[RMDB]
RNA sequence: GGGAACGACUCGAGUAGAGUCGAAAAAGCCUACGGUCUACGGACCGUAGGCACGUCAAUGAUGUCCUAAUCUACGAUUUAAUUCGAAUUGCUGUGAGAUAAUCUGAUGCAAAACAACUGAGACUAACUCGACGUUCGGAUUCGUCCGAACGUCGAGAAAAGAAACAACAACAACAAC
Reactivity to 2A3 in 0.01 (KOAc 150mM, MgCl2 10mM, bicine 150mM(pH8.5), 24C), signal-to-noise 1, nucleotides 027 to 126: a000g000c040c000u000a000c000g000g000u010c000u110a110c140g140g000a000c000c000g000u010a000g000g000c000a000c010g010u000c090a040a040u130g140a020u010g220u000c010c000u000a070a080u000c010u200a020c000g010a050u170u000u300a130a180u070u000c070g080a050a000u010u040g010c040u040g110u040g060a060g000a130u010a090a150u010c000u000g070a020u020g000c020a050a080a000a040c040a000a060c160u160g040a000g000a070c000u000a040a040